[RMDB]
The record gives the reactivity of an RNA of 177 nucleotides to DMS. The reactions ran in a buffer of 150 mM KOAc, 10 mM MgCl2 and 150 mM bicine (pH 8.5), at 24 C.
RNA sequence: GGGAACGACUCGAGUAGAGUCGAAAAGUGGACGCUGCCUGGCCAGCGGCAGCCUGCUCUGCGCGUCAGGGACGGCGGCACCCGCGCCGUACGCGUUAUCUGGCGCGCCGGCCGGCGCGCAUCGCGAAAAUAAUCGGACUUUCGAGUCCGAUUAUUUAAAAGAAACAACAACAACAAC
Reactivity to DMS in 0.01 (KOAc 150mM, MgCl2 10mM, bicine 150mM(pH8.5), 24C), signal-to-noise 1, nucleotides 027 to 126: g020u010g020g010a080c080g010c090u000g020c040c040u020g000g010c010c080a170g010c040g000g030c010a110g000c000c000u000g010c020u010c090u030g030c030g000c040g040u000c080a070g020g000g010a020c030g010g020c010g040g070c090a150c100c060c100g010c070g000c000c010g000u010a090c100g010c080g000u010u000a050u020c050u000g000g010c060g060c000g030c060c300g000g000c010c020g030g010c040g000c190g060c100a070u000c060g000c050g000a060
DMS adducts were read by reverse transcription with MarathonRT. The DMS profile rests on 839 reads.